[RMDB]
RNA sequence: GGGAACGACUCGAGUAGAGUCGAAAAGGGUGAUGUCUCCUAACCUUUAUCAAUGGGGGCACUCGGUCGUGCUGUGGGUAGAAAUUUUAUUUCGUGCCUACCUUAGACGCUUGUCAUCGGGAGUAUGUGGGACUGAUGAACUUCGGUUCAUCAGUAAGUAGUGAGAGACUUUCGAGUCUCUCACUACAAAAGAAACAACAACAACAAC
Reactivity to 2A3 in 0.01 (KOAc 150mM, MgCl2 10mM, bicine 150mM(pH8.5), 24C), signal-to-noise 4, nucleotides 027 to 156: g030g010g030u080g020a090u040g010u000c000u020c020c000u070a120a140c020c020u160u210u160a210u190c090a070a090u140g000g000g000g000g010c000a020c020u060c040g020g000u030c020g020u030g030c040u060g020u020g010g000g000u030a000g070a020a080a040u180u250u160u150a100u030u180u060c040g050u110g040c010c030u000a010c000c000u050u090a070g010a040c030g030c090u100u200g030u040c030a030u040c080g000g000g050a050g050u100a070u150g040u110g030g030g020a000c000u000g000a000u000g000a000a000c000u020u040c170g060g000u000u010c000a000u000c000a000g000u000a000a010
Reactivity to DMS in 0.01 (KOAc 150mM, MgCl2 10mM, bicine 150mM(pH8.5), 24C), signal-to-noise 1, nucleotides 027 to 156: g000g000g070u000g000a060u000g010u000c020u000c000c020u010a040a150c050c050u000u000u000a120u020c160a090a070u020g000g040g000g010g070c030a070c020u000c000g000g010u000c010g040u000g020c050u010g020u010g000g000g010u020a300g000a050a040a080u010u020u000u000a080u000u030u000c000g040u020g020c000c020u000a000c000c090u000u000a090g000a090c080g000c050u000u010g020u000c040a080u000c000g010g060g000a210g000u000a070u010g000u010g000g010g000a120c000u010g030a050u010g010a000a010c030u000u000c290g100g040u000u000c010a000u000c000a030g010u000a000a130